Structure probing data (DMS and 2A3) for a 177-nucleotide construct.

[RMDB]
RNA sequence: GGGAACGACUCGAGUAGAGUCGAAAAAUAAAUUGUCAAAUCUGGAUCCAACAGUUAAACCAUGUGAUGGUGUAUACUGUGGUAUGGCGUAAAACAUCGGAGAAAGUACAAAAGUACAAAAAAAAAACAUAACAUAUGGCUUCGGCCAUAUGUUAUGAAAAGAAACAACAACAACAAC
Reactivity to DMS in 0.01 (KOAc 150mM, MgCl2 10mM, bicine 150mM(pH8.5), 24C), signal-to-noise 2, nucleotides 027 to 126: a110u010a020a050a080u010u000g020u040c030a030a130a080u000c060u000g000g000a250u000c010c000a110a020c010a020g000u000u000a160a280a000c000c000a020u000g020u020g020a080u020g000g000u000g000u000a150u000a040c030u000g030u020g000g040u000a020u000g000g000c080g010u000a050a090a050a070c080a020u000c110g010g000a130g000a120a050a080g010u010a060c080a050a040a120a070g010u000a020c030a000a000a000a010a000a090a090a130a080a260
Reactivity to 2A3 in 0.01 (KOAc 150mM, MgCl2 10mM, bicine 150mM(pH8.5), 24C), signal-to-noise 1, nucleotides 027 to 126: a030u110a000a010a080u130u020g020u030c020a020a010a190u040c100u020g060g000a020u010c000c000a050a010c000a020g000u000u020a050a030a010c000c030a030u100g050u150g300a110u020g080g000u020g000u000a040u010a080c000u000g000u040g020g020u030a030u070g070g000c030g030u000a100a050a000a000c020a000u080c000g010g000a040g030a040a070a000g000u000a020c010a000a300a020a000g030u020a020c090a040a020a010a000a000a000a130a000a000a000
DMS adducts were read by reverse transcription with MarathonRT.
For DMS, 1,026 sequencing reads were counted.
The reactions ran in a buffer of 150 mM KOAc, 10 mM MgCl2 and 150 mM bicine (pH 8.5), at 24 C.